[RMDB]
RNA sequence: GGGAACGACUCGAGUAGAGUCGAAAAUUAUGGGGGCCACUGCAAACGAAACAGUUUUGUCUUGGUAUUAUUGGCCGAUCAGACCUGUUCCGUCUGCUGUAGUUUUUGACGCAUUCUUGAUCUAUUGCAGCAUUAGCAUUUUCGAAUGCUAAUGCUGAAAAGAAACAACAACAACAAC
Reactivity to DMS in 0.01 (KOAc 150mM, MgCl2 10mM, bicine 150mM(pH8.5), 24C), signal-to-noise 4, nucleotides 027 to 126: u000u020a080u020g010g000g000g010g000c050c030a070c050u000g010c030a010a060a050c020g000a100a050a020c010a010g000u000u000u010u000g010u030c210u000u000g010g020u010a060u020u030a150u020u030g020g000c000c000g010a040u020c020a020g000a040c040c000u000g000u000u000c040c030g010u000c040u000g000c030u000g010u000a080g020u010u000u000u000u000g000a100c110g010c080a100u010u000c020u000u000g000a110u010c050u000a090u010u020g010
Reactivity to 2A3 in 0.01 (KOAc 150mM, MgCl2 10mM, bicine 150mM(pH8.5), 24C), signal-to-noise 7, nucleotides 027 to 126: u220u100a070u060g040g010g000g020g000c010c010a020c020u020g000c000a000a040a030c010g050a040a040a040c010a010g010u010u030u090u050g060u020c110u060u070g020g020u060a070u150u090a140u110u280g200g000c000c000g000a030u050c010a000g010a020c000c010u010g000u020u000c010c000g010u010c010u020g000c020u020g030u030a070g030u040u030u030u040u170g050a040c040g020c080a060u100u080c020u040u080g060a100u020c030u050a160u080u220g030

The data come from the RNA Mapping Database (RMDB), libraries RFM100 and RFMREP. An RNA of 177 nucleotides, treated with DMS and 2A3 and read out base by base. Reactivities are given for positions 27 through 126. The reactions ran in a buffer of 150 mM KOAc, 10 mM MgCl2 and 150 mM bicine (pH 8.5), at 24 C.